RNA sequence: GGGAACGACUCGAGUAGAGUCGAAAAGUUCAUGUGUUCGCACAUGAACAAAAGACGGAGAGAAAAGCACCAUGGUCUCAACCGUCGAAAACCAAAGGUGCAAAAGUGGGGGGUUCGCCCCCCACAACAGUAGAUUACCGUUCGCGGUAAUCUACUGAAAAGAAACAACAACAACAAC
Reactivity to 2A3 in 0.01 (KOAc 150mM, MgCl2 10mM, bicine 150mM(pH8.5), 24C), signal-to-noise 2, nucleotides 027 to 126: g000u000u000c000a010u000g010u000g000u040u100c220g020c100a000c000a010u000g000a000a020c010a000a100a000a020g000a000c000g010g000a020g000a000g000a020a070a070a090g010c000a000c010c010a070u240g190g010u020c010u010c040a170a240c020c000g000u010c020g030a080a110a000a010c030c010a070a030a050g000g000u000g000c000a070a020a030a040g010u010g000g000g000g000g020g020u010u010c020g070c040c000c010c000c010c000a000c010a010a000
Reactivity to DMS in 0.01 (KOAc 150mM, MgCl2 10mM, bicine 150mM(pH8.5), 24C), signal-to-noise 1, nucleotides 027 to 126: g000u000u000c000a000u000g000u000g010u010u000c290g000c000a010c010a010u020g000a000a000c010a010a060a160a160g040a010c030g000g030a300g000a030g020a040a210a160a170g000c000a010c000c000a170u000g000g010u010c020u000c030a110a060c030c010g000u000c000g000a050a040a110a130c040c050a010a120a070g030g000u010g000c010a100a050a040a110g000u000g000g010g050g000g050g010u000u030c220g000c000c000c000c000c000c000a010c000a030a070
The record gives the reactivity of an RNA of 177 nucleotides to 2A3 and DMS. As a SHAPE reagent, 2A3 marks flexible, mostly unpaired nucleotides at the ribose 2'-OH. DMS (dimethyl sulfate) methylates the pairing face of unpaired adenines and cytosines. For DMS the reverse transcriptase was MarathonRT. Conditions: 150 mM KOAc, 10 mM MgCl2 and 150 mM bicine (pH 8.5), 24 C.